[RMDB]
RNA sequence: GGGAACGACUCGAGUAGAGUCGAAAAGGCUAGGUGGUAUUCCAGUGUGGGAUACUUGGUAAUAUGUAACGCUAAUUGCAUAAGAUUGUAGGACGGAAUUUACAGUCUUGGUUUUUAUAAACCUGAAAAAAGGAAUUACACUUCGGUGUAAUUCCAAUCUAUCCCCAUAGUUCGCUAUGGGGAUAGAAAAAGAAACAACAACAACAAC
Reactivity to 2A3 in 0.01 (KOAc 150mM, MgCl2 10mM, bicine 150mM(pH8.5), 24C), signal-to-noise 3, nucleotides 027 to 156: g060g000c080u060a020g030g060u030g010g010u040a040u040u030c030c020a070g040u050g070u150g150g020g000a020u040a030c010u030u070g020g020u080a090a080u080a100u170g060u060a040a020c040g010c160u070a060a090u110u050g000c030a030u020a070a020g010a070u040u050g030u050a000g000g110a040c080g010g020a040a040u060u070u050a020c010a020g000u010c010u030u050g000g000u000u030u020u040u060a120u190a070a060a040c010c000u030g050a080a050a000a000a010a040g000g000a000a000u000u010a000c010a000c010u020u080c160g080g000u010g000u000a000a000u010u000c000c000a000a000
Reactivity to DMS in 0.01 (KOAc 150mM, MgCl2 10mM, bicine 150mM(pH8.5), 24C), signal-to-noise 2, nucleotides 027 to 156: g050g030c010u000a070g000g050u000g020g020u000a040u010u010c020c000a240g040u000g030u000g010g030g020a110u000a020c020u000u010g010g010u010a110a160u010a080u000g010u010a090a070c040g010c070u010a050a100u000u030g020c000a150u010a090a030g010a060u010u000g020u000a070g010g010a220c040g000g090a100a300u000u000u000a060c020a050g030u020c020u000u000g000g010u020u000u000u030u000a100u020a070a010a020c020c010u000g000a000a020a080a130a130a170g010g010a030a010u000u010a000c010a020c000u000u010c300g090g010u000g010u000a010a000u000u000c000c010a010a020

The record gives the reactivity of an RNA of 207 nucleotides to 2A3 and DMS. Values cover nucleotides 27 to 156. The DMS profile rests on 3,447 reads. 2A3 adducts were read by reverse transcription with SuperScript II with manganese.